This 177-nucleotide RNA was probed chemically with DMS and 2A3. For 2A3, 15,897 sequencing reads were counted.
[RMDB]
RNA sequence: GGGAACGACUCGAGUAGAGUCGAAAAGGCAGGAAUAGAAUGGGCCGAAUCUAGGGUCUCACUGCAGGCCAGAUGCUAUUUUUGUUUGGCGCACGGCCUGGUGGCUGAUCCGGCUGUGUUCUAAGCGCAAUAUUAUUUAUUUCGAUAAAUAAUAUUGAAAAGAAACAACAACAACAAC
Reactivity to DMS in 0.01 (KOAc 150mM, MgCl2 10mM, bicine 150mM(pH8.5), 24C), signal-to-noise 9, nucleotides 027 to 126: g010g010c030a090g000g010a100a080u010a020g000a030a030u000g010g010g010c010c010g010a060a040u010c040u040a070g020g010g010u030c070u030c030a050c040u010g000c040a020g030g010c010c010a070g010a170u030g000c010u010a010u020u010u040u040u050g010u010u030u010g010g000c020g020c090a140c110g000g000c000c000u000g010g010u000g000g000c020u010g000a020u000c010c010g000g010c010u000g010u030g010u000u000c010u000a050a110g010c070g010
Reactivity to 2A3 in 0.01 (KOAc 150mM, MgCl2 10mM, bicine 150mM(pH8.5), 24C), signal-to-noise 6, nucleotides 027 to 126: g060g000c030a010g020g080a070a070u040a030g020a020a020u040g030g020g000c000c010g000a000a010u010c030u090a050g070g020g080u030c030u040c040a040c030u130g030c020a010g000g000c000c000a010g040a060u050g000c010u020a100u060u080u030u090u160g210u070u070u120g020g000c010g000c010a010c030g000g000c000c000u000g000g000u010g020g000c030u040g010a010u010c010c010g000g000c000u130g100u040g010u210u000c010u030a050a050g040c010g000
In probing experiments dimethyl sulfate is read out at A N1 and C N3, which are open when not base-paired. The RNA was probed in 150 mM KOAc, 10 mM MgCl2 and 150 mM bicine (pH 8.5) at 24 C. For DMS the reverse transcriptase was MarathonRT.